[RMDB]
RNA sequence: GGGAACGACUCGAGUAGAGUCGAAAAUCAUGCUCGCCUGAAGGGUGGUCUUAUUUUAAAGUUUGACUCUGGCACCGUUAGCAAGACUUCAGACUGGAAGUGCAAGGUGACAGAUGUACUUUUCCCCUAGCAGAGAACUUCGGUUCUCUGAAAAGAAACAACAACAACAAC
Reactivity to DMS in 0.01 (KOAc 150mM, MgCl2 10mM, bicine 150mM(pH8.5), 24C), signal-to-noise 9, nucleotides 027 to 129: u010c090a000u020g010c060u030c070g030c020c020u030g010a160a080g020g000g060u000g010g010u020c030u020u020a050u010u010u000u010a050a070a050g010u020u040u030g020a040c110u020c020u000g010g040c000a010c010c030g000u030u020a150g030c050a140a080g010a260c020u010u010c010a140g040a180c240u110g030g000a040a030g000u010g000c010a060a080g000g030u000g020a030c030a030g020a040u040g040u040a010c000u000u000u000u000c010c000c010c090u000a080g020
Reactivity to 2A3 in 0.01 (KOAc 150mM, MgCl2 10mM, bicine 150mM(pH8.5), 24C), signal-to-noise 9, nucleotides 027 to 129: u030c010a010u060g010c040u080c080g010c010c020u120g200a160a080g110g010g000u040g020g010u010c020u040u060a100u040u050u020u070a060a070a030g030u050u100u160g080a020c020u000c000u010g000g000c010a000c010c000g090u050u050a040g010c050a110a050g060a120c000u010u010c020a140g060a300c150u280g100g020a030a000g010u010g040c010a020a060g000g000u000g010a000c000a000g010a020u100g020u020a030c000u020u010u010u010c000c000c000c010u020a020g020

The record gives the reactivity of an RNA of 170 nucleotides to DMS and 2A3. The data come from the RNA Mapping Database (RMDB), library 15KLIB. 2A3 adducts were read by reverse transcription with SuperScript II with manganese. DMS adducts were read by reverse transcription with MarathonRT.